[RMDB]
RNA sequence: GGGAACGACUCGAGUAGAGUCGAAAAUUAUGGGUGCUAAUGGCAACAAGAUUGUUGACAAAGAAGUUAAAGACAUGCAGUUUGAUUUGUAUGUCAAUGUUUACAGGAGCACUAGCCCAGACCCCAAUGACUACUUUGUUCGCAAAGUAGAAAAGAAACAACAACAACAAC
Reactivity to DMS in 0.01 (KOAc 150mM, MgCl2 10mM, bicine 150mM(pH8.5), 24C), signal-to-noise 9, nucleotides 027 to 129: u040u030a070u050g010g000g010u020g020c000u000a070a100u000g020g020c030a040a020c030a060a100g000a080u060u020g000u000u000g010a030c050a040a070a090g000a110a090g020u030u030a050a100a120g000a020c020a030u000g000c020a000g040u030u030u040g040a100u000u000u000g000u040a010u020g000u000c010a030a030u030g020u020u020u020a080c070a080g000g000a060g020c000a020c030u000a090g010c000c000c030a110g020a180c050c000c010c040a060a080u000g000a170
Reactivity to 2A3 in 0.01 (KOAc 150mM, MgCl2 10mM, bicine 150mM(pH8.5), 24C), signal-to-noise 9, nucleotides 027 to 129: u200u120a080u080g060g000g000u060g020c010u030a070a070u050g060g010c010a010a000c010a020a060g150a280u120u160g040u030u020g010a020c020a010a150a020g110a080a030g060u110u160a110a020a030g010a000c000a000u000g000c010a010g020u070u200u170g290a300u110u090u020g020u010a000u000g000u000c010a000a030u090g010u020u060u060a040c030a020g070g030a020g010c020a020c070u050a040g010c010c000c000a010g040a060c010c010c010c010a040a070u150g050a020